RNA sequence: GGGAACGACUCGAGUAGAGUCGAAAACAUACGCUGUUCGCAGCGUAUGAAAAACCGUAGGCCUGAGGUAUGACAUGCCUUGACGUUCGAAAGAGCGUCAAAGGCAACAGCAUACUCAGGCCUAAACGGAAAAAACUGGGGUAUUCGUACCCCAGAACAUAACUGGCGAGUUCGCUCGCCAGUUAUGAAAAGAAACAACAACAACAAC
Reactivity to DMS in 0.01 (KOAc 150mM, MgCl2 10mM, bicine 150mM(pH8.5), 24C), signal-to-noise 1, nucleotides 027 to 156: c000a000u000a000c050g050c000u000g050u010u010c300g080c020a000g000c000g050u000a000u000g020a010a080a030a110a170c000c000g010u000a110g020g000c030c000u010g050a070g030g000u010a030u000g000a150c080a300u000g000c010c000u000u010g000a010c000g030u000u000c000g000a200a110a260g000a000g000c000g000u000c000a010a020a010g000g020c000a020a020c100a090g000c030a000u000a030c010u000c000a000g000g000c000c000u000a000a000a050c080g010g020a000a060a010a050a160a180c020u000g010g020g010g060u010a080u010u010c090g010u000a040c010c030c000c000a000g000a040a130